[RMDB]
RNA sequence: GGGAACGACUCGAGUAGAGUCGAAAAACCAUUGUGUUACAGUUGCCUAUGGUAUUCAGUACAGUAAUACGCUGUACAGGUUUGUAGCCUAGUAGCAAAAGACCAUACUAGGUGUGUAGCAGGUAUAGGAUAUAGCUCGAUUCGUCGAGCUAUAUCCAAAAGAAACAACAACAACAAC
Reactivity to DMS in 0.01 (KOAc 150mM, MgCl2 10mM, bicine 150mM(pH8.5), 24C), signal-to-noise 2, nucleotides 027 to 126: a120c020c010a120u020u000g010u010g020u000u000a020c020a080g010u010u010g010c020c010u000a090u000g030g030u000a030u000u020c180a190g000u020a010c000a000g000u020a120a120u010a140c300g000c010u000g010u020a000c010a110g010g000u000u000u000g010u020a160g010c010c010u020a100g010u010a060g010c040a040a070a270a080g000a030c090c030a090u000a030c020u000a010g000g040u000g030u000g000u020a040g030c030a030g010g030u010a070u000a130
Reactivity to 2A3 in 0.01 (KOAc 150mM, MgCl2 10mM, bicine 150mM(pH8.5), 24C), signal-to-noise 1, nucleotides 027 to 126: a000c020c000a030u020u290g150u020g010u050u020a010c010a010g050u160u160g220c000c020u090a120u130g080g030u010a070u120u170c060a030g000u000a010c010a000g020u070a110a120u120a190c100g000c000u010g000u000a000c000a020g040g050u000u100u070g080u110a000g000c000c000u030a090g030u200a010g040c020a080a080a050a050g030a050c000c040a000u010a030c030u000a040g000g000u060g080u050g020u030a030g070c030a000g070g120u080a100u120a150

Conditions: 150 mM KOAc, 10 mM MgCl2 and 150 mM bicine (pH 8.5), 24 C. Structure probing data (DMS and 2A3) for a 177-nucleotide construct. The 2A3 profile rests on 1,080 reads. For DMS the reverse transcriptase was MarathonRT. For DMS, 1,647 sequencing reads were counted. High 2A3 reactivity points to a flexible backbone, as in loops and unpaired stretches. It was measured as part of the RMDB library OK2TST.